[RMDB]
RNA sequence: GGGAACGACUCGAGUAGAGUCGAAAAAGCAAAUGAGAUGACGCCGUAGUGUCACCCGGCUUUGGGGAAUCAUGUGCAUAGUGGAAGUCAGGGUAAGGACCAAGUGAACAGAGAGUGAAGGAGGGAAGUUUGGUGAGAAAUACCAGGUCAUGGAAAAGUAAUCCAGUGACUUCGGUCACUGGAUUACAAAAGAAACAACAACAACAAC
Reactivity to 2A3 in 0.01 (KOAc 150mM, MgCl2 10mM, bicine 150mM(pH8.5), 24C), signal-to-noise 1, nucleotides 027 to 156: a000g050c090a060a110a090u260g000a200g030a100u060g010a010c020g020c020c000g070u060a020g040u010g050u160c060a060c050c040c040g000g000c060u190u150u180g000g000g070g000a040a040u080c040a020u120g020u040g050c010a080u060a150g130u100g020g010a110a010g010u060c060a050g030g000g050u060a040a040g040g000a040c010c030a060a000g000u000g040a060a030c010a090g020a000g000a000g050u010g010a090a000g010g010a010g020g010g000a050a000g000u010u090u060g000g000u010g000a020g010a020a090a000u090a020c040c020a010g010g030u060c040a120u060g000g010a000a160a000a000